[RMDB]
RNA sequence: GGGAACGACUCGAGUAGAGUCGAAAAAGUUCAUAUGCCCACCUUUGCUUGUCUGCGGGUGGAUGCCUCAUGGUGCUAUGAAUGCCUAUAAUUGAAAUAUUAUAGAUGCCUAAUUUUCCUCUCUUGAGGAAAAUUAGAUGCAUACAAGGCAGAAGCACACCAUACGACCUUUCGAGGUCGUAUGGUGAAAAGAAACAACAACAACAAC
Reactivity to 2A3 in 0.01 (KOAc 150mM, MgCl2 10mM, bicine 150mM(pH8.5), 24C), signal-to-noise 1, nucleotides 027 to 156: a000g020u040u080c040a010u080a050u300g070c010c000c010a030c010c000u100u100u120g060c030u130u110g140u300c070u080g040c050g060g000g000u010g000g000a120u120g000c000c030u170c080a200u180g000g000u010g000c000u040a040u160g110a100a080u180g020c000c000u020a020u000a010a000u010u120g040a110a120a050u190a020u060u050a050u020a070g020a050u070g000c000c000u000a000a020u010u010u010u000c000c000u000c020u110c070u100u300g000a020g000g000a000a000a000a000u000u010a000g000a000u100g010c010a010u020a000c020a010a010g020g000c010a010g000a070a010g000c030a050